[RMDB]
RNA sequence: GGGAACGACUCGAGUAGAGUCGAAAAGUGGCAUGAUCUUGGCUCACUACAACCUCGGCCUCCUGGGUUCAAGCCAUUCUUCUGCCUUAGCCUCCUGAGUAGCUGUGAUUACAGGUGUGUGCCACCACUGACUCUUACACUUCGGUGUAAGAGUCAGAAAAGAAACAACAACAACAAC
Reactivity to 2A3 in 0.01 (KOAc 150mM, MgCl2 10mM, bicine 150mM(pH8.5), 24C), signal-to-noise 1, nucleotides 027 to 126: g070u040g020g000c020a030u100g050a110u140c050u080u060g080g000c050u050c050a050c030u110a050c080a060a130c030c020u050c050g080g020c020c030u060c030c020u050g160g000g000u050u090c060a060a000g030c020c000a030u050u030c030u100u010c010u060g060c000c010u030u030a000g000c030c000u000c000c030u050g090a060g020u020a020g000c070u010g040u070g060a080u080u080a020c030a010g010g030u040g020u020g010u030g090c000c010a010c000c000a040
Reactivity to DMS in 0.01 (KOAc 150mM, MgCl2 10mM, bicine 150mM(pH8.5), 24C), signal-to-noise 2, nucleotides 027 to 126: g000u000g020g020c040a030u000g010a070u000c030u000u000g000g030c060u010c070a050c080u000a090c100a080a070c020c030u000c060g000g000c010c030u000c040c040u010g000g000g030u010u000c150a040a080g010c040c070a070u000u000c040u010u000c040u010g010c070c010u010u000a090g000c040c020u010c020c030u010g010a090g000u000a040g030c020u000g000u000g000a080u000u010a100c070a050g000g030u000g010u040g010u000g010c020c020a040c000c080a160
Notes: Chemical mapping of a 177-nucleotide RNA with 2A3 and DMS. The reactions ran in a buffer of 150 mM KOAc, 10 mM MgCl2 and 150 mM bicine (pH 8.5), at 24 C. The 2A3 profile rests on 1,509 reads. The DMS profile rests on 2,009 reads.